[RMDB]
RNA sequence: GGGAACGACUCGAGUAGAGUCGAAAAGAUAUGGAUGGUCAUAUCUGCCGUUGAUCUCGGAAACGAGGGAGGCAUAUAUGAGCCAUCCUAAGUCAAACAUGCAAUGCAGUUCGCUGCAUUGCAUGAACCGUCACAGUUAGUUCGCUAACUGUGACGGAAAAGAAACAACAACAACAAC
Reactivity to DMS in 0.01 (KOAc 150mM, MgCl2 10mM, bicine 150mM(pH8.5), 24C), signal-to-noise 1, nucleotides 027 to 126: g000a030u000a300u000g010g000a000u000g000g010u000c000a000u000a000u000c030u000g000c020c010g000u000u000g010a020u000c010u010c000g000g010a130a130a140c020g010a020g000g000g000a010g020g010c000a000u000a000u000a010u000g000a110g010c000c000a000u000c020c010u010a010a090g010u000c030a070a140a300c010a000u000g020c000a010a000u000g010c010a000g000u000u020c240g050c000u000g010c000a000u010u000g000c000a000u000g000a050a140
Reactivity to 2A3 in 0.01 (KOAc 150mM, MgCl2 10mM, bicine 150mM(pH8.5), 24C), signal-to-noise 1, nucleotides 027 to 126: g020a010u070a040u200g020g010a000u000g000g020u040c000a010u000a000u020c090u000g020c000c000g170u300u000g010a010u000c000u000c000g020g020a130a080a060c030g010a000g060g010g000a000g020g030c000a000u010a000u000a010u000g070a070g150c000c000a000u000c010c000u000a020a000g030u000c050a060a050a080c000a000u000g000c000a000a010u010g000c000a000g020u070u150c270g160c190u000g020c000a000u000u000g000c000a000u000g000a010a030
Structure probing data (DMS and 2A3) for a 177-nucleotide construct. It was measured as part of the RMDB library TTRDEL. For 2A3, 3,074 sequencing reads were counted. 2A3 adducts were read by reverse transcription with SuperScript II with manganese. Conditions: 150 mM KOAc, 10 mM MgCl2 and 150 mM bicine (pH 8.5), 24 C.